[RMDB]
RNA sequence: GGGAACGACUCGAGUAGAGUCGAAAACCAUAACAGUUCGCUGUUAUGGACUGUCGCAAUGCGGAAUAAUUAAUCGUCCGCUUACGAUUAAUACCGACUAUAAAGCGUAACACUUCGGUGUUACGAAUAAGAGUAUAUUAUUCGUAAUAUACUCUUAAAAAGAAACAACAACAACAAC
Reactivity to 2A3 in 0.01 (KOAc 150mM, MgCl2 10mM, bicine 150mM(pH8.5), 24C), signal-to-noise 9, nucleotides 027 to 126: c000c000a000u000a000a000c000a010g040u070u080c120g060c120u000g000u010u010a000u010g000g010a030c050u070g020u030c010g000c060a040a060u190g000c010g000g090a040a050u140a110a140u240u210a090a110u150c110g030u000c020c010g010c010u000u030a000c000g000a000u000u130a030a040u040a100c010c020g060a030c070u070a080u110a300a130a020g100c000g000u000a000a000c000a000c010u030u090c200g060g000u010g000u000u000a000c000g010a000a000
Reactivity to DMS in 0.01 (KOAc 150mM, MgCl2 10mM, bicine 150mM(pH8.5), 24C), signal-to-noise 9, nucleotides 027 to 126: c000c000a010u000a000a010c000a000g010u000u010c210g030c010u000g000u000u000a000u000g000g000a100c190u000g010u000c010g030c020a020a020u010g010c000g000g000a040a040u010a080a150u010u010a080a090u000c240g010u000c020c020g010c020u000u000a010c000g000a020u000u000a090a080u000a170c030c010g010a120c240u010a090u010a080a100a130g000c010g010u000a010a010c000a010c000u000u010c200g020g010u000g010u000u000a000c000g010a050a050